[RMDB]
Source: RMDB library M2PK90, as collected in RNAgym. An RNA of 177 nucleotides, treated with DMS and 2A3 and read out base by base. For DMS the reverse transcriptase was MarathonRT. DMS (dimethyl sulfate) methylates the pairing face of unpaired adenines and cytosines. The reactions ran in a buffer of 150 mM KOAc, 10 mM MgCl2 and 150 mM bicine (pH 8.5), at 24 C. For 2A3 the reverse transcriptase was SuperScript II with manganese.
RNA sequence: GGGAACGACUCGAGUAGAGUCGAAAAAAAAAGCACGCGAAGCACGCGAAGCUCGCGAAGCACGCGAAGCACGCGAAGCACGCGAAGCACGCGAAGCACGCGAAGCACGCGAAGCACGCGAAAAAAACAUUAAUGAUACGUUCGCGUAUCAUUAAUGAAAAGAAACAACAACAACAAC
Reactivity to DMS in 0.01 (KOAc 150mM, MgCl2 10mM, bicine 150mM(pH8.5), 24C), signal-to-noise 2, nucleotides 027 to 126: a060a020a050a030a100g010c160a160c000g020c000g010a080a150g030c020a180c020g000c020g000a080a050g000c010u000c000g020c000g010a090a090g020c030a120c010g010c000g000a050a130g020c010a230c000g010c010g010a080a150g000c200a140c030g010c030g000a040a110g030c030a230c000g020c020g010a070a060g010c010a150c010g030c000g000a000a050g010c030a140c010g010c000g020a050a040g010c000a160c000g000c060g000a000a010a010a070a080a030a100
Reactivity to 2A3 in 0.01 (KOAc 150mM, MgCl2 10mM, bicine 150mM(pH8.5), 24C), signal-to-noise 2, nucleotides 027 to 126: a000a000a000a000a000g140c070a030c040g030c000g030a070a000g000c020a000c020g000c010g060a060a020g020c000u010c000g000c010g050a080a020g000c030a010c020g010c000g040a090a020g010c020a010c000g010c000g050a080a020g160c120a020c080g020c000g030a060a020g030c020a000c030g000c010g030a050a020g000c010a000c030g010c010g030a040a010g010c010a010c020g000c000g040a050a020g020c010a010c000g040c000g110a110a020a000a000a000a000a010